[RMDB]
RNA sequence: GGGAACGACUCGAGUAGAGUCGAAAACACUUCUGAGCCCAGACUUGGGCCUAAACUUGGAAGCGUAUGGCAGAACAGGGUAACUGAACCCUAAAGUUUCUGGCUAGAUGGCCAAAACAGGGAGUCCCAGAGAACUGGGAAGCAUCCAGGAGAUCACACACGUAGUGUCGUUCGCGACACUACGUGUAAAAGAAACAACAACAACAAC
Reactivity to 2A3 in 0.01 (KOAc 150mM, MgCl2 10mM, bicine 150mM(pH8.5), 24C), signal-to-noise 2, nucleotides 027 to 156: c020a010c010u010u010c010u050g020a020g020c050c010c040a140g060a300c160u160u120g010g000g020c050c000u120a120a140a090c060u030u010g000g000a060a000g010c000g050u150a080u090g040g000c000a000g020a060a010c010a020g000g090g090u100a100a130c000u150g150a110a090c000c000c010u060a080a130a000g010u010u010u010c070u030g040g040c000u030a080g050a250u210g060g100c050c000a060a080a000a000c040a000g000g080g000a060g050u010c000c000c000a020g030a010g000a290a140c010u020g000g030g030a010a010g090c060a040u000c000c000a000g050g000a080g040a060u090c020a020c010
This 207-nucleotide RNA was probed chemically with 2A3. Reactivities are rounded to 0.1 and cut off at 0 and 3. It was measured as part of the RMDB library OK3TST.